[RMDB]
RNA sequence: GGGAACGACUCGAGUAGAGUCGAAAAGAAAUUGCGAAGUUACUAAAUUUGCCUGAUAACGCACACACGCAGCAAUGGCGUAAGACGUAAUGCGAAAUCAAGCAGUUAGCGGGCUGUGGAUUGCAGCGUUGUAUACUAUCUUCGGAUAGUAUACAACAAAAGAAACAACAACAACAAC
Reactivity to DMS in 0.01 (KOAc 150mM, MgCl2 10mM, bicine 150mM(pH8.5), 24C), signal-to-noise 9, nucleotides 027 to 126: g010a070a070a080u000u000g020c070g010a120a080g020u000u010a100c030u000a020a040a070u010u000u010g030c000c020u000g020a020u000a030a300c020g000c000a020c110a090c260a030c020g020c010a180g020c040a190a100u010g010g010c000g020u000a000a010g030a100c010g040u000a100a100u000g000c000g000a030a210a020u000c020a010a030g010c010a020g010u000u000a020g000c100g020g010g000c020u000g010u000g010g010a090u000u000g010c040a050g000c120
Reactivity to 2A3 in 0.01 (KOAc 150mM, MgCl2 10mM, bicine 150mM(pH8.5), 24C), signal-to-noise 9, nucleotides 027 to 126: g020a010a050a020u120u080g030c040g050a060a020g080u100u080a090c030u070a030a080a180u180u160u070g000c000c000u000g010a020u010a040a020c000g000c000a000c000a000c000a000c040g010c000a010g000c030a090a300u220g300g000c000g000u010a010a000g050a010c010g010u010a050a020u030g000c000g000a070a000a010u020c010a020a000g000c010a010g010u010u030a020g020c100g030g040g000c010u010g020u040g080g130a150u080u200g020c020a010g030c020